Structure probing data (2A3 and DMS) for a 177-nucleotide construct.
Conditions: 150 mM KOAc, 10 mM MgCl2 and 150 mM bicine (pH 8.5), 24 C.
For DMS, 3,145 sequencing reads were counted.
DMS adducts were read by reverse transcription with MarathonRT.
[RMDB]
RNA sequence: GGGAACGACUCGAGUAGAGUCGAAAAGGGAGCGAGUUCGCUCGCUCCCAAACCCGAUGAAGCGGCACUUACGGAGCUUCAUACAUCUAAGAUGUGCAAUAAAAAGCGGUAGCUUCGGCUACCGCAACCAAUCACUAUUCUUCGGAAUAGUGAUUGGAAAAGAAACAACAACAACAAC
Reactivity to 2A3 in 0.01 (KOAc 150mM, MgCl2 10mM, bicine 150mM(pH8.5), 24C), signal-to-noise 4, nucleotides 027 to 126: g010g000g000a010g000c000g010a010g010u040u050c070g020c050u010c000g020c020u010c000c000c000a010a000a000c000c000c000g010a040u050g000a010a010g010c040g130g070c080a040c120u200u220a060c210g110g040a030g020c000u000u000c000a000u060a010c020a030u050c050u190a130a100g020a140u060g030u040g030c060a080a040u170a180a170a070a070a020g000c000g000g000u010a000g000c000u040u020c220g030g000c000u010a000c000c000g000c000a000a000
Reactivity to DMS in 0.01 (KOAc 150mM, MgCl2 10mM, bicine 150mM(pH8.5), 24C), signal-to-noise 4, nucleotides 027 to 126: g000g010g000a020g020c020g000a030g030u000u000c220g020c010u000c020g000c000u000c000c000c000a010a020a090c000c010c000g030a040u010g000a020a020g000c000g000g040c080a100c130u000u020a210c230g010g010a270g010c010u000u000c010a030u010a030c030a020u000c070u020a120a140g010a040u000g010u000g030c210a090a110u030a040a050a070a160a110g000c000g010g000u000a000g010c000u000u020c210g030g010c010u000a020c000c000g000c000a010a020